[RMDB]
RNA sequence: GGGAACGACUCGAGUAGAGUCGAAAAGGUACAACGUUCGCGUUGUACCAAAUAAGGCAACCUUCGUGGUGACCAGAAUAAAUGAGUGCUCGCCCUCAUAAAAAACAAUCCCCUUCGGGGGAUUGAACAAGAGUAUCUACUUCGGUAGAUACUCUUGAAAAGAAACAACAACAACAAC
Reactivity to DMS in 0.01 (KOAc 150mM, MgCl2 10mM, bicine 150mM(pH8.5), 24C), signal-to-noise 3, nucleotides 027 to 126: g010g000u000a010c000a000a000c000g030u010u010c220g040c010g020u010u000g010u000a000c000c010a000a020a050u000a130a090g000g010c160a090a020c020c010u000u010c150g020u020g020g010u000g000a120c020c020a160g000a090a080u000a050a160a060u010g010a050g010u010g010c070u000c160g000c090c050c000u000c030a020u020a010a040a100a150a060a100c000a000a010u000c000c000c000c000u000u010c160g010g030g000g000g000a000u000u000g000a090a150
Reactivity to 2A3 in 0.01 (KOAc 150mM, MgCl2 10mM, bicine 150mM(pH8.5), 24C), signal-to-noise 3, nucleotides 027 to 126: g010g000u000a000c000a000a000c010g020u050u100c180g040c000g110u000u010g000u000a000c000c010a010a000a010u070a030a010g020g020c010a050a080c020c010u030u090c220g210u210g050g000u040g020a080c020c020a030g080a130a080u150a120a180a040u070g020a020g020u070g030c030u040c090g060c000c060c000u010c010a020u150a000a160a000a000a020a000c000a010a010u010c000c000c000c020u000u030c070g040g010g000g000g000a000u000u000g000a000a000
An RNA of 177 nucleotides, treated with DMS and 2A3 and read out base by base.
It was measured as part of the RMDB library M2PK50.